The record gives the reactivity of an RNA of 207 nucleotides to 2A3 and DMS. For DMS the reverse transcriptase was MarathonRT. For 2A3 the reverse transcriptase was SuperScript II with manganese.
RNA sequence: GGGAACGACUCGAGUAGAGUCGAAAACAUUACAGAACCCACUAACAAAAAACAUCAACGAUAUAGUAAACGUAACGUGGACUGAGGAAAUAAUAUCAUCAUCUUCACUAAUAAAUUUCACAAACACACAACAAGCGUGUUCACAAUGCUCAACCACACCAAUUAGAAACUUCGGUUUCUAAUUGGUAAAAGAAACAACAACAACAAC
Reactivity to 2A3 in 0.01 (KOAc 150mM, MgCl2 10mM, bicine 150mM(pH8.5), 24C), signal-to-noise 7, nucleotides 027 to 156: c030a070u170u290a060c040a070g120a120a090c010c050c030a030c060u150a130a050c130a060a070a010a030a010a020c050a080u150c070a020a070c070g030a070u070a040u070a210g130u140a110a050a050c060g020u050a010a050c040g020u040g000g050a060c050u040g010a030g060g080a050a070a060u190a040a060u110a070u140c030a010u030c010a040u020c060u120u040c030a010c090u070a050a090u090a120a170a080u110u190u130c080a040c020a040a110a010c010a010c010a010c020a090a190c040a140a010g060c040g050u020g030u080u070c070a060c040a090a050u120g010c000u020c020a030a040c050c040a040c010
Reactivity to DMS in 0.01 (KOAc 150mM, MgCl2 10mM, bicine 150mM(pH8.5), 24C), signal-to-noise 2, nucleotides 027 to 156: c050a110u010u030a300c090a140g000a110a150c020c020c010a050c080u010a100a130c080a030a100a090a070a100a040c050a090u000c020a110a060c050g040a080u010a060u010a060g020u010a050a080a100c050g000u000a100a100c090g020u000g010g020a030c030u010g030a070g000g000a050a070a200u030a070a170u000a100u000c010a070u020c020a080u000c060u000u020c050a040c070u000a100a180u000a020a100a120u000u020u000c030a050c050a060a050a000c080a040c060a010c010a060a170c100a070a100g040c010g000u000g020u000u000c020a040c040a100a050u000g010c030u000c100a120a050c020c010a060c190
Values cover nucleotides 27 to 156. High DMS reactivity at an A or C suggests that its Watson-Crick edge is free.